The record gives the reactivity of an RNA of 177 nucleotides to 2A3 and DMS. The RNA was probed in 150 mM KOAc, 10 mM MgCl2 and 150 mM bicine (pH 8.5) at 24 C. For DMS, 1,643 sequencing reads were counted. It was measured as part of the RMDB library OK2TST. For 2A3 the reverse transcriptase was SuperScript II with manganese.

[RMDB]
RNA sequence: GGGAACGACUCGAGUAGAGUCGAAAAAUGGCAGUUGCGAAGAAACAUAAACUCAUGAGGUGAACAGGCAAUAAGUGAAGUUCCCUUUCGCUGUGCCGUCAACGCAUUCAAUUGCGACGCCGUGGCAUCCCUGAUAUCCGUUCGCGGAUAUCAGGGAAAAAGAAACAACAACAACAAC
Reactivity to 2A3 in 0.01 (KOAc 150mM, MgCl2 10mM, bicine 150mM(pH8.5), 24C), signal-to-noise 1, nucleotides 027 to 126: a000u040g000g000c050a080g040u050u030g030c020g030a050a010g040a060a220a030c000a030u240a150a140a050c070u110c100a070u160g080a100g210g000u050g040a090a030c020a130g010g000c010a030a140u150a300a050g000u000g010a000a000g000u090u110c000c010c020u010u020u020c010g030c000u000g000u020g050c000c020g010u020c000a000a050c060g070c050a000u120u000c080a130a300u120u070g010c010g020a000c010g000c000c010g000u040g020g000c040a090
Reactivity to DMS in 0.01 (KOAc 150mM, MgCl2 10mM, bicine 150mM(pH8.5), 24C), signal-to-noise 3, nucleotides 027 to 126: a030u010g000g030c030a130g040u000u000g020c010g010a060a080g010a070a060a160c180a140u020a080a080a070c050u030c110a040u000g000a070g000g010u000g020a090a070c110a160g010g040c010a080a070u000a060a040g000u000g000a030a060g010u000u010c020c040c040u000u000u000c010g000c010u030g030u020g020c040c000g000u000c090a040a090c070g040c040a050u000u000c210a110a110u000u000g020c020g020a080c050g000c030c060g020u010g010g000c240a130